[RMDB]
RNA sequence: GGGAACGACUCGAGUAGAGUCGAAAAACGUUGAUAUGGAUUUACUCCGAGGAGACGAACUACCACGAACAGGGGUAACUCUACCCGUGGCGUCUCCGUUUGACGAGUAAGUCGUAAGUCAACAUGCAGAGAUAGUUCUUCGGAACUAUCAAAAGAAACAACAACAACAAC
Reactivity to 2A3 in 0.01 (KOAc 150mM, MgCl2 10mM, bicine 150mM(pH8.5), 24C), signal-to-noise 9, nucleotides 027 to 129: a000c060g000u000u010g010a010u020a060u220g130g000a000u000u010u000a000c000u000c000c010g010a060g000g000a010g000a000c000g010a050a030c080u160a060c070c000a000c000g040a100a020c060a100g030g000g000g010u060a090a070c010u010c010u050a040c030c010c010g000u000g000g000c000g000u000c000u000c000c000g010u050u030u070g010a010c000g000a000g000u000a000a000g000u000c010g010u040a030a030g010u000c000a000a000c010a000u110g030c030a010g070a000
Reactivity to DMS in 0.01 (KOAc 150mM, MgCl2 10mM, bicine 150mM(pH8.5), 24C), signal-to-noise 9, nucleotides 027 to 129: a070c090g000u000u000g000a040u000a090u080g010g030a040u000u000u000a030c030u020c020c000g010a110g010g020a030g000a020c000g010a100a050c100u050a300c040c000a010c000g030a050a300c200a000g010g000g000g000u010a090a080c030u000c020u000a140c150c100c020g000u000g000g000c020g000u020c010u000c000c010g000u010u000u010g000a150c300g010a020g010u020a010a020g000u000c010g010u050a030a170g010u000c020a020a010c020a060u030g040c070a040g020a060
Structure probing data (2A3 and DMS) for a 170-nucleotide construct. For 2A3 the reverse transcriptase was SuperScript II with manganese. DMS adducts were read by reverse transcription with MarathonRT. For DMS, 44,920 sequencing reads were counted. The RNA was probed in 150 mM KOAc, 10 mM MgCl2 and 150 mM bicine (pH 8.5) at 24 C.